Chemical mapping of a 177-nucleotide RNA with 2A3 and DMS. For 2A3 the reverse transcriptase was SuperScript II with manganese. The RNA was probed in 150 mM KOAc, 10 mM MgCl2 and 150 mM bicine (pH 8.5) at 24 C.
RNA sequence: GGGAACGACUCGAGUAGAGUCGAAAAGAUAUGGACACUUUAAGGGAGCUGCUACUCGGAAACGAGUAGGCAGCUUUGAUCUUAUGGUGUCCUAAGUCAAAGGGUUGCUACUUCGGUAGCAACCCAACAUUAAUCCUGAGUUCGCUCAGGAUUAAUGAAAAGAAACAACAACAACAAC
Reactivity to 2A3 in 0.01 (KOAc 150mM, MgCl2 10mM, bicine 150mM(pH8.5), 24C), signal-to-noise 3, nucleotides 027 to 126: g010a000u030a010u090g000g000a010c000a000c020u050u010u060a080a010g110g110g050a120g080c000u020g000c000u000a010c000u010c010g000g020a110a020a010c010g000a010g000u020a010g040g040c010a030g010c010u020u030u030g010a010u000c000u010u010a000u020g020g000u000g000u000c000c000u000a010a010g030u020c030a060a110a120g010g010g000u000u000g010c000u000a010c010u050u090c280g140g000u000a000g010c000a000a000c000c010c000a000a010
Reactivity to DMS in 0.01 (KOAc 150mM, MgCl2 10mM, bicine 150mM(pH8.5), 24C), signal-to-noise 5, nucleotides 027 to 126: g010a020u000a250u010g000g000a010c000a000c000u000u000u000a010a010g010g010g010a050g030c000u000g010c000u000a010c000u000c000g010g010a060a050a110c000g010a020g010u000a020g010g030c000a000g010c000u000u010u010g010a090u000c010u000u000a000u000g010g010u000g010u000c000c000u000a010a070g000u000c020a140a140a170g010g000g010u000u000g010c000u000a000c000u000u020c260g020g000u000a010g000c000a000a000c000c000c000a000a020